[RMDB]
RNA sequence: GGGAACGACUCGAGUAGAGUCGAAAAACACCAUUACGAUGGUGAGUAAGGAGUGUGAGAGCUAAAUAACUAAAAUAAUGAAAAUUCCUCUUUGACUAGCCGAUAGCGAUAUCGGCUAUUUUUUUAAAUAUGUUAGCUCAUUCGUGAGCUAACAUAUAAAAGAAACAACAACAACAAC
Reactivity to 2A3 in 0.01 (KOAc 150mM, MgCl2 10mM, bicine 150mM(pH8.5), 24C), signal-to-noise 2, nucleotides 027 to 126: a000c020a020c000c010a040u060u110a050c290g040a060u000g000g000u000g030a020g010u020a000a070g030g050a010g050u080g000u030g040a120g020a070g160c060u060a060a110a150u190a170a040c020u090a000a070a020a080u160a000a160u160g120a120a050a010a000u010u000c010c000u050c040u060u080u080g090a020c060u030a000g000c010c000g000a000u000a000g040c090g050a060u010a000u000c000g000g000c030u000a000u000u000u000u000u000u000u000a000a040
Reactivity to DMS in 0.01 (KOAc 150mM, MgCl2 10mM, bicine 150mM(pH8.5), 24C), signal-to-noise 4, nucleotides 027 to 126: a140c050a060c030c000a030u020u000a100c110g030a080u000g000g010u000g000a090g000u020a080a130g000g010a040g000u010g000u020g010a100g000a090g020c040u020a040a060a050u020a100a100c060u010a040a050a040a080u020a080a120u020g000a060a080a060a130u010u020c030c020u000c170u020u010u040g010a060c190u000a010g000c000c000g010a020u000a000g010c270g000a140u000a010u000c010g000g010c010u000a000u000u000u000u010u010u010u010a030a110

This 177-nucleotide RNA was probed chemically with 2A3 and DMS. DMS adducts were read by reverse transcription with MarathonRT. Source: RMDB libraries RFM100 and RFMREP, as collected in RNAgym. Values cover nucleotides 27 to 126.